RNA sequence: GGGAACGACUCGAGUAGAGUCGAAAAGACCGGGAUGGACGCACCGCUGGUGUACCAGUUGUUCCGCCAGGAGCAUAGCUGGGUAGCUACGUGCGGACGGGAUAAGUGCGGAAAGCAUCUAAGCAUGGAUGGUAGACAACUUCGGUUGUCUACCAUCAAAAGAAACAACAACAACAAC
Reactivity to DMS in 0.01 (KOAc 150mM, MgCl2 10mM, bicine 150mM(pH8.5), 24C), signal-to-noise 3, nucleotides 027 to 126: g010a250c000c010g020g000g000a160u010g030g000a120c010g000c030a030c010c020g000c040u000g010g000u010g000u000a300c000c000a040g010u000u010g000u000u000c000c000g000c300c300a150g000g000a020g000c010a030u020a090g010c010u010g010g000g010u030a300g000c000u000a010c100g010u010g000c000g010g000a100c040g010g000g030a150u000a050a030g030u010g000c090g000g000a090a090a130g010c070a030u020c060u000a080a090g010c070a130u000g010
Reactivity to 2A3 in 0.01 (KOAc 150mM, MgCl2 10mM, bicine 150mM(pH8.5), 24C), signal-to-noise 1, nucleotides 027 to 126: g100a010c000c000g000g030g050a100u200g000g050a000c030g040c010a010c000c000g020c050u060g000g110u060g050u230a040c010c000a000g010u030u010g010u020u000c010c010g050c120c050a080g000g010a010g010c050a080u050a040g000c020u000g000g030g090u000a000g000c000u000a000c040g000u000g000c000g000g000a010c000g010g000g020a040u070a220a000g100u020g060c040g040g050a130a030a050g000c000a020u050c050u080a090a010g100c070a070u070g140